[RMDB]
RNA sequence: GGGAACGACUCGAGUAGAGUCGAAAAAGAUUGGAGAAAAGAGUCCAGAUGAGGAGCUAGAGGAAGAAGGGACCAUCGAGAUCUCAGAAGGCCUAGGCUUCCCCAAAGGAUCGGAGCCCAUGGAGUGCAAAGUAUACGCGUUCGCGCGUAUACUUUGAAAAGAAACAACAACAACAAC
Reactivity to DMS in 0.01 (KOAc 150mM, MgCl2 10mM, bicine 150mM(pH8.5), 24C), signal-to-noise 5, nucleotides 027 to 126: a050g010a140u030u010g000g000a070g010a070a080a070a120g000a160g000u010c030c030a070g000a300u020g010a100g000g000a050g000c020u000a050g010a100g000g010a050a010g010a300a180g000g000g010a040c050c020a080u030c160g000a130g020a040u010c020u000c050a030g000a140a070g010g000c050c030u020a150g000g010c020u020u010c000c040c040c040a030a140a110g010g010a200u000c030g020g000a100g000c020c000c030a090u030g030g010a120g030u040g010
Reactivity to 2A3 in 0.01 (KOAc 150mM, MgCl2 10mM, bicine 150mM(pH8.5), 24C), signal-to-noise 4, nucleotides 027 to 126: a010g160a070u110u130g030g020a110g090a010a180a060a010g060a040g070u050c010c010a040g040a190u080g020a050g050g010a020g010c020u060a070g030a040g190g010a020a070g040a040a090g080g000g040a060c020c000a020u050c030g030a070g050a270u010c010u000c010a050g040a140a020g130g020c010c020u010a050g060g000c000u110u100c000c000c000c000a050a160a050g020g000a010u020c050g010g000a010g040c000c000c030a070u060g040g010a040g010u110g010